Source: RMDB libraries RFM100 and RFMREP, as collected in RNAgym. The record gives the reactivity of an RNA of 177 nucleotides to DMS and 2A3. For 2A3 the reverse transcriptase was SuperScript II with manganese.
[RMDB]
RNA sequence: GGGAACGACUCGAGUAGAGUCGAAAAAUGCAGGAUUGGGUAGCGGCAACCUGUAAUCAAGCGAUGCAUUCGAGGCGAGGACGAGAGCAUUGUUAGGACCUUUGGGACAAGCGACGCAUACAGUUGAAACCAUAAUAGAGUUCGCUCUAUUAUGGUUAAAAGAAACAACAACAACAAC
Reactivity to DMS in 0.01 (KOAc 150mM, MgCl2 10mM, bicine 150mM(pH8.5), 24C), signal-to-noise 9, nucleotides 027 to 126: a070u010g010c020a040g000g010a100u010u010g010g010g010u000a080g020c040g000g010c030a070a060c040c030u000g010u010a050a080u020c110a110a100g010c050g010a050u010g010c090a080u010u010c050g010a120g010g010c040g010a070g000g000a090c040g000a070g010a070g010c040a030u010u010g010u000u010a090g000g000a090c040c030u000u010u010g010g010g000a060c080a060a100g010c060g000a060c080g010c070a070u020a060c120a070g000u000u010g010a120
Reactivity to 2A3 in 0.01 (KOAc 150mM, MgCl2 10mM, bicine 150mM(pH8.5), 24C), signal-to-noise 9, nucleotides 027 to 126: a000u100g010c020a010g040g100a200u050u070g040g030g020u050a030g030c010g040g000c010a010a030c000c010u030g040u090a030a080u100c070a040a010g040c010g050a030u070g010c040a080u040u080c050g020a050g010g030c030g020a040g030g030a020c030g020a010g000a010g070c030a030u030u050g040u060u060a040g010g060a050c010c000u020u060u120g040g000g020a030c010a030a040g020c030g050a030c030g000c040a040u070a140c050a040g020u030u030g090a090